The record gives the reactivity of an RNA of 207 nucleotides to DMS and 2A3. For DMS, 2,945 sequencing reads were counted. DMS adducts were read by reverse transcription with MarathonRT.
RNA sequence: GGGAACGACUCGAGUAGAGUCGAAAAGGGGUCGUCGUUUGACGCGAACGACAUGAUCGUACACUGAAGCCUCCACGGUGUAUAGAUCAACAGCGUUCGCCGAGACGACGGAGGCACCCAAAACCUAUAAACGUGUGUUCGCACACGUUUAUAGGAAUCGUCUAAAAUUCUUCGGAAUUUUAGACGAAAAAGAAACAACAACAACAAC
Reactivity to DMS in 0.01 (KOAc 150mM, MgCl2 10mM, bicine 150mM(pH8.5), 24C), signal-to-noise 1, nucleotides 027 to 156: g000g010g000g000u000c010g050u000c000g020u000u000u000g000a120c190g000c010g000a000a010c000g030a080c090a220u000g000a000u000c010g000u000a000c020a010c010u000g000a100a120g000c000c000u000c000c020a290c020g030g030u000g000u010a010u000a220g020a030u000c000a040a150c230a130g010c020g010u000u000c010g020c000c000g000a150g020a000c000g000a070c000g000g030a010g030g030c020a030c000c010c020a090a020a080a160c010c010u010a020u000a000a020a000c000g020u030g000u000g030u000u000c300g000c000a000c020a000c000g000u000u000u000a000u000a030g020g010a020a030
Reactivity to 2A3 in 0.01 (KOAc 150mM, MgCl2 10mM, bicine 150mM(pH8.5), 24C), signal-to-noise 3, nucleotides 027 to 156: g100g010g020g010u020c000g000u000c010g010u090u180u200g000a000c000g010c000g000a000a000c000g140a070c080a180u300g000a000u000c000g000u000a000c000a000c000u040g040a110a020g020c000c000u020c000c020a070c040g000g000u000g050u020a010u050a120g010a010u010c030a050a120c060a080g030c000g000u000u000c000g000c000c000g020a020g000a010c010g000a000c010g010g000a000g000g000c020a040c020c010c000a040a140a050a080c000c000u000a000u000a000a000a000c000g000u010g000u000g030u090u090c240g030c130a000c010a000c000g000u000u000u000a000u000a000g000g000a010a070